[RMDB]
RNA sequence: GGGAACGACUCGAGUAGAGUCGAAAAUUACAUAAGUCUAACACCUUGUUUCGGACUAACAAGGACGCAUGGAGGAUGGCCGAUCCUCCAUAGUUAGACGUCCGAGAACCAGCCGAAAUGAAAAAGACAGGCCCUAAUUAUUCGUAAUUAGGGCCUGAAAAGAAACAACAACAACAAC
Reactivity to 2A3 in 0.01 (KOAc 150mM, MgCl2 10mM, bicine 150mM(pH8.5), 24C), signal-to-noise 3, nucleotides 027 to 126: u150u120a050c040a050u150a200a080g030u010c040u040a070a020c020a070c050c030u010u040g040u000u030u030c090g130g000a200c070u060a070a010c050a030a010g020g020a070c040g030c070a020u000g000g000a000g020g010a010u040g150g080c100c020g010a010u000c000c000u000c000c000a000u000a000g000u020u030a040g020a090c000g000u000c000c000g020a030g020a070a040c030c010a010g050c010c010g010a000a010a000u050g050a020a030a020a050a020g070a050
Reactivity to DMS in 0.01 (KOAc 150mM, MgCl2 10mM, bicine 150mM(pH8.5), 24C), signal-to-noise 3, nucleotides 027 to 126: u010u070a070c070a040u000a040a080g020u060c010u000a080a070c130a100c140c060u000u020g010u000u000u000c030g000g000a090c050u020a080a040c030a050a220g000g000a040c030g000c050a060u000g000g010a030g000g000a000u010g000g000c140c140g000a300u000c000c000u000c000c000a000u000a010g000u000u000a060g000a180c000g030u020c020c020g000a160g000a050a170c160c200a040g030c020c010g020a000a010a040u020g000a000a040a030a160a090g010a130
The record gives the reactivity of an RNA of 177 nucleotides to 2A3 and DMS. Reactivities are rounded to 0.1 and cut off at 0 and 3. The data come from the RNA Mapping Database (RMDB), library OK1LIB. The RNA was probed in 150 mM KOAc, 10 mM MgCl2 and 150 mM bicine (pH 8.5) at 24 C. For DMS the reverse transcriptase was MarathonRT. Values cover nucleotides 27 to 126.